Overview: Structure probing data (2A3) for a 207-nucleotide construct. Reactivities are given for positions 27 through 156. The data come from the RNA Mapping Database (RMDB), library OK3TST. The 2A3 profile rests on 388 reads.
[RMDB]
RNA sequence: GGGAACGACUCGAGUAGAGUCGAAAAAUGAUUGUUCUUCUAUUACAGUCAACAGUGUUUACAGGAUUCCUUGAUUCGGUUACAGUGUAACCAUAAAUGUAAGUAAAUAUGUUGUCAUAUCCCACUUCAAGCAUUCUGUUUAAAAUUCUGAAUAGAAAUCCCAGCUUUUAUUCGUAAAAGCUGGGAUAAAAGAAACAACAACAACAAC
Reactivity to 2A3 in 0.01 (KOAc 150mM, MgCl2 10mM, bicine 150mM(pH8.5), 24C), signal-to-noise 1, nucleotides 027 to 156: a000u050g030a050u000u140g040u030u020c000u050u000c000u000a040u030u030a170c010a000g030u030c000a030a030c020a040g020u020g030u210u040u040a030c090a010g010g010a010u040u070c020c020u060u070g020a050u040u110c060g030g000u000u000a000c030a160g090u030g030u280a010a000c010c000a000u030a000a050a020u130g030u070a020a100g070u030a000a020a040u060a020u130g030u050u020g020u040c000a000u040a110u170c000c000c000a030c000u000u000c030a000a000g010c000a000u000u000c000u000g070u270u100u300a040a300a030a070u300u120c050u070g110a000a010u300a000g280a300a050